[RMDB]
RNA sequence: GGGAACGACUCGAGUAGAGUCGAAAACCGGGUCGCGCUCUUGGGGGUAACCCCUUUGAGACUUGACCGGUUCCUCUCCCACCCUGCCGAGCUUCCUGCCGCUAGUCGAGCGGACUCCGGGUAGCUCUCCGACCCUCAGAUUUUCUCUUAAGGUCUGCAGUAUCUGAGUCUUCGGACUCAGAUACUGAAAAGAAACAACAACAACAAC
Reactivity to 2A3 in 0.01 (KOAc 150mM, MgCl2 10mM, bicine 150mM(pH8.5), 24C), signal-to-noise 1, nucleotides 027 to 156: c010c000g000g110g000u090c060g000c030g000c190u010c000u000u010g000g000g040g020g060u140a120a180c010c030c000c000u010u070u110g000a000g010a120c010u150u170g020a020c010c000g000g010u020u000c010c020u060c000u010c020c010c000a050c020c000c070u130g120c130c070g010a040g000c010u060u020c010c000u040g050c010c000g000c030u060a140g220u200c140g080a000g000c040g000g020a030c040u040c070c030g040g010g040u000a000g000c000u010c010u010c000c080g020a020c000c010c050u030c070a000g000a050u100u090u250u140c030u030c020u050u040a070a000g000g000u000c020u060g000

An RNA of 207 nucleotides, treated with 2A3 and read out base by base. For 2A3 the reverse transcriptase was SuperScript II with manganese. Reactivities are rounded to 0.1 and cut off at 0 and 3. Values cover nucleotides 27 to 156. The data come from the RNA Mapping Database (RMDB), library VIROID.